Notes: An RNA of 177 nucleotides, treated with 2A3 and DMS and read out base by base. It was measured as part of the RMDB library OK2TRN. The 2A3 profile rests on 1,575 reads. 2A3 is a SHAPE reagent: it acylates the 2'-hydroxyl of flexible nucleotides of all four kinds.

[RMDB]
RNA sequence: GGGAACGACUCGAGUAGAGUCGAAAAGGGUCAUGCAAGGCAGAAAUGAAGAGUUAGCGCAUGACAGCUAGCAGUAUUUAUAAGGGAACAGGGUGUGAUCACUUUAAGUUCACAGGCAAAUGCCUGGGCCCUUUGGUUUAUUCGUAAACCAAAGGGCAAAAGAAACAACAACAACAAC
Reactivity to 2A3 in 0.01 (KOAc 150mM, MgCl2 10mM, bicine 150mM(pH8.5), 24C), signal-to-noise 2, nucleotides 027 to 126: g050g010g000u000c020a000u020g030c010a020a040g110g000c010a000g180a120a140a020u130g030a080a080g080a030g090u040u070a020g020c020g020c100a100u100g040a110c010a030g020c010u010a020g040c030a000g040u070a030u040u100u040a180u030a120a070g060g000g000a050a000c030a050g030g000g070u080g040u050g060a030u120c000a030c110u110u120u060a090a030g020u100u090c030a010c000a120g020g060c040a300a300a160u240g000c000c010u020g010g060
Reactivity to DMS in 0.01 (KOAc 150mM, MgCl2 10mM, bicine 150mM(pH8.5), 24C), signal-to-noise 3, nucleotides 027 to 126: g020g020g000u040c020a030u010g010c030a110a080g010g010c040a080g000a120a110a080u000g000a100a070g010a170g000u010u010a060g010c090g030c090a130u000g000a050c120a060g030c040u020a020g020c030a090g000u010a040u000u000u000a050u030a110a170g010g000g010a030a040c070a090g010g010g010u000g010u000g000a070u010c050a070c100u000u010u010a040a080g010u000u010c040a090c000a020g000g010c030a090a070a100u010g000c000c000u000g010g000